[RMDB]
RNA sequence: GGGAACGACUCGAGUAGAGUCGAAAAGAUAUGGAAGUAGCGUUACGCGAUAAGAAGCUGUCGGAAACGACAGGCUUCUUUUGACGCGUGACCUACUUCCUAAGUCAAACCAACCUUCGGGUUGGAAGAAGGAGUAGAUCUUCGGAUCUACUCCUUCAAAAGAAACAACAACAACAAC
Reactivity to DMS in 0.01 (KOAc 150mM, MgCl2 10mM, bicine 150mM(pH8.5), 24C), signal-to-noise 3, nucleotides 027 to 126: g000a040u020a300u010g000g020a020a000g020u000a000g010c240g020u000u010a000c000g030c000g010a180u000a030a020g000a020a000g010c020u010g010u000c010g000g000a140a090a210c000g010a000c010a020g010g000c010u000u000c000u020u020u000u000g030a160c130g020c000g020u010g010a000c000c000u000a000c010u000u000c000c010u000a000a070g000u010c040a150a150a260c000c000a010a010c000c010u000u000c200g020g000g020u000u000g000g000a040a110
Reactivity to 2A3 in 0.01 (KOAc 150mM, MgCl2 10mM, bicine 150mM(pH8.5), 24C), signal-to-noise 2, nucleotides 027 to 126: g040a010u090a040u160g020g000a000a010g000u000a000g030c090g160u010u000a010c020g000c000g020a040u040a050a000g010a010a000g000c000u000g040u000c010g020g050a150a070a050c010g010a000c000a000g110g020c000u000u000c000u020u000u020u080g120a030c030g020c010g010u000g000a000c000c000u000a000c000u000u000c010c000u010a010a000g000u000c010a010a070a160c010c010a000a020c020c000u070u120c300g200g000g000u000u030g040g000a020a060